[RMDB]
Chemical mapping of a 177-nucleotide RNA with 2A3 and DMS. Conditions: 150 mM KOAc, 10 mM MgCl2 and 150 mM bicine (pH 8.5), 24 C. The DMS profile rests on 1,430 reads. For 2A3 the reverse transcriptase was SuperScript II with manganese. Source: RMDB library OK1LIB, as collected in RNAgym. For DMS the reverse transcriptase was MarathonRT. For 2A3, 1,183 sequencing reads were counted.

RNA sequence: GGGAACGACUCGAGUAGAGUCGAAAAAUCAACGACGUGCCGAUCGCCGAAUCCGAGCGUCGCUACCUCGGUGCGCGCUCGGCAUCCGAGUAUGGCCAGGAAAUACCGCUCUGGUAGCCCGGUAGGGGUCCUCCCCUGGUUUCGACCAGGGGAGGACAAAAGAAACAACAACAACAAC
Reactivity to 2A3 in 0.01 (KOAc 150mM, MgCl2 10mM, bicine 150mM(pH8.5), 24C), signal-to-noise 2, nucleotides 027 to 126: a020u070c020a020a020c050g040a020c020g020u040g000c000c000g010a030u070c080g000c110c050g090a020a060u080c000c000g000a010g040c070g190u110c130g010c080u170a060c000c000u010c040g060g010u020g000c160g010c000g000c000u000c000g000g000c000a000u010c010c010g020a000g030u020a130u040g060g020c030c000a020g000g100a050a040a000u150a060c000c020g070c030u000c030u000g000g000u050a060g020c000c040c020g030g000u090a090g010g050g030
Reactivity to DMS in 0.01 (KOAc 150mM, MgCl2 10mM, bicine 150mM(pH8.5), 24C), signal-to-noise 1, nucleotides 027 to 126: a080u020c050a010a040c000g020a300c170g000u000g020c000c000g030a000u010c060g060c000c020g010a130a070u010c010c000g000a040g020c110g010u050c260g020c100u040a040c210c000u060c030g000g020u010g010c300g000c000g000c040u000c000g000g000c040a000u010c000c000g000a240g000u000a010u000g000g000c070c000a100g000g010a010a000a110u000a010c040c000g000c060u010c000u040g010g000u010a060g010c010c000c010g070g050u020a070g020g020g000